[RMDB]
This 207-nucleotide RNA was probed chemically with 2A3.
Source: RMDB library OK3TST, as collected in RNAgym.
For 2A3, 414 sequencing reads were counted.
Reactivities are given for positions 27 through 156.
RNA sequence: GGGAACGACUCGAGUAGAGUCGAAAAGUUGUCCAUGAGCACAAUUAAAAAAAAAAUCUAUCGUGAACAUAAAGAAUCAAGUCCUGAAAAGGAUGUUUACUUAGCAUCUGUGGCUAGGACACGUUAGCCAAAAGUAUCACUGAUGGGAAUAUCAUGAACCGAAAAUAUGCUUCGGCAUAUUUUCGGUAAAAGAAACAACAACAACAAC
Reactivity to 2A3 in 0.01 (KOAc 150mM, MgCl2 10mM, bicine 150mM(pH8.5), 24C), signal-to-noise 1, nucleotides 027 to 156: g010u000u000g020u000c040c000a030u030g030a020g040c040a030c040a100a100u280u190a200a030a020a050a000a000a000a000a000a020u100c040u060a070u030c020g000u000g010a010a000c000a030u150a090a190a050g070a100a000u180c020a100a090g070u060c000c010u050g020a040a010a010a010g050g000a020u050g040u010u060u040a060c060u070u120a000g010c000a010u010c020u000g030u020g130g000c060u020a000g000g070a020c010a020c100g070u120u030a020g020c020c020a020a020a010a020g050u050a140u170c080a020c080u030g040a000u030g000g130g000a030a020u080a000u030c070a030u000g050a000